[RMDB]
RNA sequence: GGGAACGACUCGAGUAGAGUCGAAAAUGAACAUUGCUAAAUGUUCCCGUAUCAUUCCUGCAAAGGCACGUGUUGAGUGCUAUGACAGGUUUAAAGUUAAUGAGACAAAUUCUCAAUAUUUGUUUAGACAUGAAAUGAACUUCGGUUCAUUUCAUGUAAAAGAAACAACAACAACAAC
Reactivity to DMS in 0.01 (KOAc 150mM, MgCl2 10mM, bicine 150mM(pH8.5), 24C), signal-to-noise 4, nucleotides 027 to 126: u000g020a060a040c030a020u000u010g010c190u000a050a070a020u010g000u000u000c010c150c070g030u010a080u000c070a090u000u000c000c000u000g000c020a050a130a300g000g000c000a000c000g030u010g030u010u010g010a140g000u000g000c000u000a090u010g020a120c000a010g010g000u000u000u000a040a050a120g010u000u000a070a080u000g010a060g000a030c070a040a040a080u010u000c070u010c100a090a070u020a060u000u000u010g010u000u000u000a080g010
Reactivity to 2A3 in 0.01 (KOAc 150mM, MgCl2 10mM, bicine 150mM(pH8.5), 24C), signal-to-noise 2, nucleotides 027 to 126: u120g000a040a010c010a010u050u090g060c120u220a130a020a010u020g000u010u000c040c020c000g020u030a070u090c020a030u050u050c000c000u000g000c020a010a080a180g050g030c010a010c000g150u240g150u120u140g190a170g040u040g000c000u030a030u050g060a030c010a000g010g000u000u050u040a010a000a000g010u020u060a060a030u130g010a020g000a020c020a040a100a050u120u010c080u020c030a050a040u100a060u120u050u050g040u000u060u020a040g040
The data come from the RNA Mapping Database (RMDB), library 15KREP. Chemical mapping of a 177-nucleotide RNA with DMS and 2A3. For 2A3, 1,655 sequencing reads were counted. For DMS, 3,433 sequencing reads were counted. Reactivities are given for positions 27 through 126.